RNA sequence: GGGAACGACUCGAGUAGAGUCGAAAAGGAGAUUCCUGUUGGAUUACAAGUAGUACGUCAUAUGAUUACCAGAUCUGUAUAUCAGUCUCGAAUUUCUAGUAUCUGGCGACAGCUUUUAAGUGUGAAAUUAGCAUGCGAAGCACGAGCAGGGGCGCGAAGCAGUGCUUCAAUUCGUUGAAGCACUGCUAAAAGAAACAACAACAACAAC
Reactivity to DMS in 0.01 (KOAc 150mM, MgCl2 10mM, bicine 150mM(pH8.5), 24C), signal-to-noise 1, nucleotides 027 to 156: g020g000a060g010a080u000u000c000c000u000g070u000u010g010g040a140u000u010a070c070a090a160g000u000a050g000u000a070c060g030u010c050a130u000a130u010g000a100u010u000a070c010c020a070g000a020u010c040u010g010u010a150u010a120u000c020a060g020u010c050u000c060g000a140a080u010u000u000c030u030a020g020u000a060u000c010u000g020g040c060g000a060c040a090g020c060u010u020u000u010a000a150g020u000g010u000g010a150a040a110u010u010a150g000c050a070u010g040c130g000a070a130g010c010a050c050g000a150g030c070a100g010g000g000g030c000g000c050g010a100
Reactivity to 2A3 in 0.01 (KOAc 150mM, MgCl2 10mM, bicine 150mM(pH8.5), 24C), signal-to-noise 1, nucleotides 027 to 156: g070g090a130g010a060u130u000c060c070u110g000u130u130g030g050a120u070u030a140c140a160a000g020u040a000g020u040a150c000g050u020c030a060u100a050u250g030a070u040u150a090c000c010a020g000a060u120c000u000g080u050a080u000a020u300c060a040g100u030c000u020c220g100a130a040u000u190u130c100u110a010g000u100a020u000c010u010g000g000c000g000a010c020a060g000c030u000u130u010u190a100a060g020u010g000u000g030a120a110a180u150u070a030g060c020a050u100g000c010g040a010a000g000c030a000c070g000a020g000c000a000g000g000g040g000c040g030c070g000a010

The data come from the RNA Mapping Database (RMDB), library OK3TST. Chemical mapping of a 207-nucleotide RNA with DMS and 2A3. For 2A3, 361 sequencing reads were counted.